[RMDB]
RNA sequence: GGGAACGACUCGAGUAGAGUCGAAAAUAGCGAUCUCUAAUGAGAUCGCGAGUCGAAUCCAUCGAAGAGGCUCGACAGAUGGACGACAGCGAGCCUACAGGAGUCGAGGAAAACUCGACUCCAAAAAGGGCUCCUAUUAUUUCGAUAAUAGGAGCCCAAAAGAAACAACAACAACAAC
Reactivity to DMS in 0.01 (KOAc 150mM, MgCl2 10mM, bicine 150mM(pH8.5), 24C), signal-to-noise 2, nucleotides 027 to 126: u030a260g030c000g000a000u000c000u000c010u020a180a270u000g000a000g030a000u000c020g020c030g030a010g000u000c070g010a100a070u030c000c000a010u000c140g000a120a170g030a020g000g050c010u000c000g010a130c120a160g000a050u050g000g000a080c120g000a090c150a120g000c030g000a030g000c000c010u000a030c250a090g030g000a000g020u000c000g000a000g000g000a160a050a110a210c010u000c000g000a000c000u000c000c000a000a010a150a100a010
Reactivity to 2A3 in 0.01 (KOAc 150mM, MgCl2 10mM, bicine 150mM(pH8.5), 24C), signal-to-noise 3, nucleotides 027 to 126: u170a000g020c030g000a000u000c000u000c040u160a300a220u300g000a000g000a000u000c000g010c000g000a000g010u000c000g050a100a060u020c000c010a010u020c040g060a100a080g070a040g050g030c090u040c060g040a020c050a090g080a010u110g000g040a020c020g010a000c010a000g050c010g050a020g000c000c010u030a040c070a050g000g020a000g000u000c000g010a020g000g050a060a100a160a170c000u000c000g000a000c000u000c000c000a000a000a000a000a000
An RNA of 177 nucleotides, treated with DMS and 2A3 and read out base by base.
For DMS the reverse transcriptase was MarathonRT.
The reactions ran in a buffer of 150 mM KOAc, 10 mM MgCl2 and 150 mM bicine (pH 8.5), at 24 C.
It was measured as part of the RMDB library OK1LIB.
For 2A3, 1,684 sequencing reads were counted.